[RMDB]
RNA sequence: GGGAACGACUCGAGUAGAGUCGAAAAAUAAACAUGGUUACCAAAACGAUUCCGUGAAGGUAGCCAUGAAACACGGAAUGGUUAUAAAAGCUGAGCGUUAGGAAAAACCUAAUGCUCAGCAAAAAAACAGUUAACGUAAGUUCGCUUACGUUAACUGAAAAGAAACAACAACAACAAC
Reactivity to DMS in 0.01 (KOAc 150mM, MgCl2 10mM, bicine 150mM(pH8.5), 24C), signal-to-noise 3, nucleotides 027 to 126: a080u010a050a100a140c010a000u000g000g000u000u000a020c010c000a020a120a170a040c090g000a300u010u010c140c020g040u000g010a120a130g000g000u000a000g000c010c010a000u000g000a060a050a100c080a040c070g010g010a060a080u010g010g010u000u000a100u010a060a080a090a120g020c010u000g010a000g010c010g040u000u000a010g010g000a040a140a070a160a090c010c000u000a000a000u000g000c000u010c000a000g030c020a000a000a040a080a030a020a020
Reactivity to 2A3 in 0.01 (KOAc 150mM, MgCl2 10mM, bicine 150mM(pH8.5), 24C), signal-to-noise 2, nucleotides 027 to 126: a020u120a010a060a000c010a030u020g000g000u020u000a010c000c010a090a030a070a110c020g060a250u230u200c150c010g010u020g020a050a010g000g020u020a000g040c010c000a000u010g000a000a010a000c080a010c010g020g100a110a080u190g170g030u150u120a110u080a170a130a060a060g000c020u000g000a000g040c010g010u020u000a000g010g010a150a080a100a130a150c000c000u010a000a000u000g000c000u000c010a000g000c000a000a010a000a000a000a010a000

The record gives the reactivity of an RNA of 177 nucleotides to DMS and 2A3.
DMS adducts were read by reverse transcription with MarathonRT.
2A3 adducts were read by reverse transcription with SuperScript II with manganese.
The 2A3 profile rests on 1,870 reads.
Reactivities are given for positions 27 through 126.
The RNA was probed in 150 mM KOAc, 10 mM MgCl2 and 150 mM bicine (pH 8.5) at 24 C.
The DMS profile rests on 4,820 reads.